[RMDB]
RNA sequence: GGGAACGACUCGAGUAGAGUCGAAAAUCGAUGAACCUGAAGGUCCAUCCGCAUACGAAGGGAUUCCGCGUGUUCUCGCUGCGCUCGCCGCUGUACGUGAAGGGGACGUUCAAGAAUCCGGACGUCAGAUUUAUACUCGCUUCGGCGAGUAUAAAUCAAAAGAAACAACAACAACAAC
Reactivity to DMS in 0.01 (KOAc 150mM, MgCl2 10mM, bicine 150mM(pH8.5), 24C), signal-to-noise 3, nucleotides 027 to 126: u010c070g020a030u000g010a040a040c010c010u010g040a140a140g030g010u020c010c010a040u000c010c120g010c140a090u020a020c060g030a090a290g020g010g010a060u000u000c000c070g020c170g010u000g010u000u000c020u010c030g020c040u000g010c050g020c020u010c110g030c070c080g020c090u010g000u000a080c150g000u010g000a090a090g000g000g010g010a020c000g010u000u000c050a080a090g020a080a060u010c040c040g010g000a170c020g010u000c120a100
Reactivity to 2A3 in 0.01 (KOAc 150mM, MgCl2 10mM, bicine 150mM(pH8.5), 24C), signal-to-noise 1, nucleotides 027 to 126: u140c070g000a020u030g020a000a020c010c010u070g180a260a070g050g000u010c000c000a020u000c030c030g120c040a080u100a150c050g070a050a030g110g000g000a030u040u040c030c000g070c030g030u050g220u060u020c020u000c000g000c020u050g000c000g000c030u070c030g040c100c020g020c070u070g030u060a070c100g050u050g070a090a020g060g020g000g030a020c010g000u060u050c060a050a000g030a080a040u020c020c000g000g000a000c010g000u020c010a000